[RMDB]
RNA sequence: GGGAACGACUCGAGUAGAGUCGAAAACAUGGAGUCUUCGGACUCCAUGCACUACCGAUAUAAUGCCUCGGUAUAAAAGGCAAACCCUUGGAAACAAGGGAACGAUGUCACGAUUCGUCGUGACAAAACUACAUUUCGAGUUCGCUCGAAAUGUAGUAAAAGAAACAACAACAACAAC
Reactivity to 2A3 in 0.01 (KOAc 150mM, MgCl2 10mM, bicine 150mM(pH8.5), 24C), signal-to-noise 3, nucleotides 027 to 126: c010a000u000g000g000a000g010u020c020u050u060c300g040g020a000c000u000c000c000a000u000g010c000a030c020u040a020c000c000g010a020u040a010u040a300a110u110g010c020c000u010c000g000g000u040a050u170a240a050a000a010g000g000c000a000a060a210c000c000c000u000u010g030g020a040a040a010c000a010a000g000g000g030a010a000c050g070a070u090g000u000c000a000c000g010a010u030u060c210g070u000c010g000u070g000a010c000a000a000a010
Reactivity to DMS in 0.01 (KOAc 150mM, MgCl2 10mM, bicine 150mM(pH8.5), 24C), signal-to-noise 3, nucleotides 027 to 126: c000a000u000g000g000a010g000u000c000u000u000c250g050g000a020c000u020c000c000a000u000g000c070a150c010u010a030c010c000g020a060u010a100u020a080a120u000g000c000c010u000c000g010g000u000a100u000a030a030a070a030g010g000c000a040a090a260c000c010c000u000u000g000g000a200a100a180c000a000a000g000g000g000a020a020c260g000a200u000g000u000c000a010c000g000a020u000u010c230g010u000c000g010u000g010a010c000a010a020a070